This 207-nucleotide RNA was probed chemically with 2A3. Conditions: 150 mM KOAc, 10 mM MgCl2 and 150 mM bicine (pH 8.5), 24 C. For 2A3 the reverse transcriptase was SuperScript II with manganese. Source: RMDB library RNAMAK, as collected in RNAgym.
RNA sequence: GGGAACGACUCGAGUAGAGUCGAAAAGGGGUCAAAGUCGGGCCCAUUGUCAGCUACCACUGAAGCCUCCACGGUGGAUAGCUUGGAUUUAUGGGUCUCUAGCGUGCUUUGACGGAGGCACCCAAAACGAAUUCUGUCCUUCGGGACAGAAUUCGAACUCCUGUUCAAUCUUCGGAUUGAACAGGAGAAAAGAAACAACAACAACAAC
Reactivity to 2A3 in 0.01 (KOAc 150mM, MgCl2 10mM, bicine 150mM(pH8.5), 24C), signal-to-noise 2, nucleotides 027 to 156: g110g030g050g010u060c040a010a010a010g040u070c120g020g010g000c020c020c030a040u120u300g170u060c000a010g000c000u000a000c000c000a010c000u010g000a110a010g040c000c000u010c000c010a030c030g010g010u020g020g070a290u000a000g000c020u030u170g090g020a000u100u210u280a030u070g000g000g020u060c040u010c050u170a100g050c060g160u250g000c000u010u000u010g010a010c010g000g000a000g010g010c000a010c000c000c000a040a050a020a050c010g010a000a000u000u000c000u000g020u000c000c000u080u120c300g070g010g000a000c000a000g000a000a000u000u000c000g010a000a000